[RMDB]
RNA sequence: GGGAACGACUCGAGUAGAGUCGAAAAAGCAGCACAGCAGGGCUGGGCCCCUGGCAGCAAGGAGUAGGGCUGGGCUGGGGUAGGGGGAGCCCCAGGGACUGGAAGGGACAGGUUUGGUGGGAUGUGCCAAGUAUGAAUGCUUCGGCAUUCAUACUUGAAAAGAAACAACAACAACAAC
Reactivity to DMS in 0.01 (KOAc 150mM, MgCl2 10mM, bicine 150mM(pH8.5), 24C), signal-to-noise 1, nucleotides 027 to 126: a040g020c070a070g000c030a070c100a090g030c070a070g040g020g030c030u020g020g010g000c050c010c030c000u010g010g020c040a040g010c040a120a100g010g000a120g020u020a100g020g000g000c100u010g020g000g010c130u000g000g000g010g010u010a060g050g010g000g000g000a080g000c040c010c010c030a090g010g020g000a110c110u020g000g010a180a080g000g000g010a070c080a120g010g000u000u000u000g000g000u000g000g010g020a110u010g020u000g030c090
Reactivity to 2A3 in 0.01 (KOAc 150mM, MgCl2 10mM, bicine 150mM(pH8.5), 24C), signal-to-noise 1, nucleotides 027 to 126: a010g000c030a010g000c040a010c020a120g060c030a040g000g070g020c020u150g040g090g000c020c010c000c010u050g040g000c020a010g010c030a030a080g060g050a080g050u190a080g050g060g020c120u090g000g070g000c090u110g020g010g000g040u090a090g000g030g000g000g030a030g020c030c020c000c010a010g020g030g000a020c090u060g000g040a090a060g030g000g010a050c040a030g080g000u110u140u120g030g030u130g010g030g000a050u090g030u000g080c010
This 177-nucleotide RNA was probed chemically with DMS and 2A3. High DMS reactivity at an A or C suggests that its Watson-Crick edge is free. Reactivities are rounded to 0.1 and cut off at 0 and 3. For DMS, 1,443 sequencing reads were counted. Values cover nucleotides 27 to 126.